Record summary:
An RNA of 207 nucleotides, treated with 2A3 and DMS and read out base by base. It was measured as part of the RMDB library OK3TST. Conditions: 150 mM KOAc, 10 mM MgCl2 and 150 mM bicine (pH 8.5), 24 C. Reactivities are given for positions 27 through 156. For DMS the reverse transcriptase was MarathonRT.

RNA sequence: GGGAACGACUCGAGUAGAGUCGAAAAUAGGAAAUCCAGCUAGCCCUGUCUCUCACCAGGAAUGCUUGUGCUUGCUACUGAAAAGCUAAGGCCAGAGGUAAAGACUAUGGAUUUGGGGAAUGAAUAUUCUGUGAAGCCAUAAGAUAAUGGCCUGAGGUACCAUUGAUCUAUUCGUAGAUCAAUGGUAAAAAGAAACAACAACAACAAC
Reactivity to 2A3 in 0.01 (KOAc 150mM, MgCl2 10mM, bicine 150mM(pH8.5), 24C), signal-to-noise 4, nucleotides 027 to 156: u180a000g040g020a020a010a040u050c020c020a010g020c050u070a030g010c010c010c020u040g070u050c030u000c000u010c050a050c040c040a030g070g000a140a050u120g010c030u070u050g040u060g050c020u010u030g030c010u050a070c060u090g070a050a110a030a000g050c030u030a020a020g000g010c010c010a010g030a040g090g040u080a050a070a060g040a030c010u020a030u020g010g010a020u020u030u050g030g000g030g020a010a020u030g040a050a060u150a090u250u050c090u030g300u040g150a020a000g020c000c010a010u030a040a030g030a060u090a130a060u100g000g000c000c010u040g030a060g050g030
Reactivity to DMS in 0.01 (KOAc 150mM, MgCl2 10mM, bicine 150mM(pH8.5), 24C), signal-to-noise 3, nucleotides 027 to 156: u000a100g030g000a080a070a080u000c020c030a110g020c080u000a110g000c040c000c020u010g010u000c040u000c010u000c040a140c110c050a080g010g010a140a140u000g010c030u000u010g020u000g020c030u000u020g020c040u000a180c100u010g000a080a110a080a100g020c030u000a100a060g000g020c010c020a030g020a100g040g010u010a080a060a130g020a130c080u000a040u010g010g020a050u000u000u010g000g000g020g000a030a030u000g020a110a130u010a130u000u000c010u000g020u000g000a030a050g000c000c010a010u000a030a100g020a120u010a060a130u010g000g020c010c010u000g010a100g030g020